The record gives the reactivity of an RNA of 177 nucleotides to DMS and 2A3. The 2A3 profile rests on 16,792 reads. High DMS reactivity at an A or C suggests that its Watson-Crick edge is free. The data come from the RNA Mapping Database (RMDB), library OK1LIB.
RNA sequence: GGGAACGACUCGAGUAGAGUCGAAAACUCGGUAUGCCAUGAUCAGAACGAAUCUAAAGGUAGAUGUUCCAUUGAGGCCUUAGAGCAGGUGGUGCAUGGCUGUAGUCAGAUUGUAUUGCGAGCCGAAAAAUAAAUCAUUAUUCGUAAUGAUUUAUUUAAAAGAAACAACAACAACAAC
Reactivity to DMS in 0.01 (KOAc 150mM, MgCl2 10mM, bicine 150mM(pH8.5), 24C), signal-to-noise 9, nucleotides 027 to 126: c030u000c010g010g020u020a050u020g010c010c010a020u000g000a060u000c030a010g000a010a050c010g000a010a000u000c000u000a000a000a000g000g000u000a000g000a000u000g000u020u010c090c070a100u020u020g010a170g010g000c010c010u000u010a040g000a050g010c140a170g000g010u000g010g010u010g020c010a020u000g000g010c000u000g010u020a060g010u020c070a080g000a130u010u010g010u010a110u000u010g010c040g010a130g010c030c020g010a010a080
Reactivity to 2A3 in 0.01 (KOAc 150mM, MgCl2 10mM, bicine 150mM(pH8.5), 24C), signal-to-noise 5, nucleotides 027 to 126: c010u010c000g020g030u130a050u140g000c000c000a020u020g000a020u000c010a010g030a090a030c010g000a010a010u000c000u000a010a010a020g010g000u000a000g000a030u010g060u120u030c040c010a000u010u120g080a030g060g040c000c000u010u040a010g000a000g020c050a030g000g060u020g010g010u020g120c000a010u000g000g020c020u010g020u020a020g020u000c020a000g030a160u060u090g050u070a060u010u050g040c020g030a000g020c000c000g020a040a010